[RMDB]
RNA sequence: GGGAACGACUCGAGUAGAGUCGAAAAGAUUGCCAAGCCGCCAUAUGAUCGUGAAGAUAAUCCUGUUCUAAGAUCCCCGAUAUGGUGGACAUUCUUCAUGGUUAGGUCAUGUAGAAAUGGGAGGCUAGCUACUAGGCCUAUUCGUAGGCCUAGUAGCAAAAGAAACAACAACAACAAC
Reactivity to 2A3 in 0.01 (KOAc 150mM, MgCl2 10mM, bicine 150mM(pH8.5), 24C), signal-to-noise 1, nucleotides 027 to 126: g030a010u050u130g000c010c000a040a000g070c010c010g020c010c010a000u030a050u080g040a020u040c070g010u060g100a020a050g000a080u070a070a080u050c030c070u100g060u200u070c030u020a040a070g030a240u000c090c000c020c000g050a030u010a030u100g040g000u010g040g000a030c000a010u020u010c020u020u020c000a010u000g060g110u110u160a070g050g170u180c000a010u050g000u060a030g000a110a130a030u020g010g000g020a070g000g000c030u030a010
Reactivity to DMS in 0.01 (KOAc 150mM, MgCl2 10mM, bicine 150mM(pH8.5), 24C), signal-to-noise 2, nucleotides 027 to 126: g010a160u010u000g010c010c010a120a130g010c010c010g060c000c000a030u000a050u000g000a030u000c040g010u010g000a120a030g020a060u000a080a120u010c050c070u000g000u000u000c040u010a090a140g000a110u000c040c090c030c150g000a110u000a020u000g010g000u020g020g000a100c020a080u000u000c000u000u010c000a010u010g020g020u000u000a130g040g010u000c010a000u000g010u000a050g000a010a070a060u010g010g000g000a150g010g020c010u000a070

The record gives the reactivity of an RNA of 177 nucleotides to 2A3 and DMS. Values are in units of 0.01, from 0 to 300, in steps of 10. For DMS the reverse transcriptase was MarathonRT. The data come from the RNA Mapping Database (RMDB), library OK2TST. Reactivities are given for positions 27 through 126.